[RMDB]
RNA sequence: GGGAACGACUCGAGUAGAGUCGAAAACGAUCAGUACGUUCGCGUACUGAUCGAAGCUACUGGAGACAGUAGCAAGUCUAAGAACUUGUUAGGCGGAAACAAGGAAAAAUGGAGGAAGGCCGGAUCUCCAUACUUAGACAACCGCUAACUGGCCAAAGUCAUAAAUAGCCUUCGGGCUAUUUAUGACAAAAGAAACAACAACAACAAC
Reactivity to 2A3 in 0.01 (KOAc 150mM, MgCl2 10mM, bicine 150mM(pH8.5), 24C), signal-to-noise 2, nucleotides 027 to 156: c020g000a010u000c000a020g000u010a000c010g030u030u090c220g010c000g130u020a000c010u000g000a000u000c000g000a000a010g020c000u000a000c010u000g020g000a040g010a020c000a000g000u000a010g000c010a010a020g000u010c000u000a000a020g010a110a080c000u010u000g010u020u050a120g090g100c080g030g070a070a020a000c010a020a010g030g080a030a070a020a060a020u030g030g000a020g040g020a150a150g020g000c000c030g000g060a190u100c000u000c010c000a000u020a050c000u000u000a000g000a020c030a070a100c100c010g040c170u120a110a090c010u020g010g010c000c010a040a030a010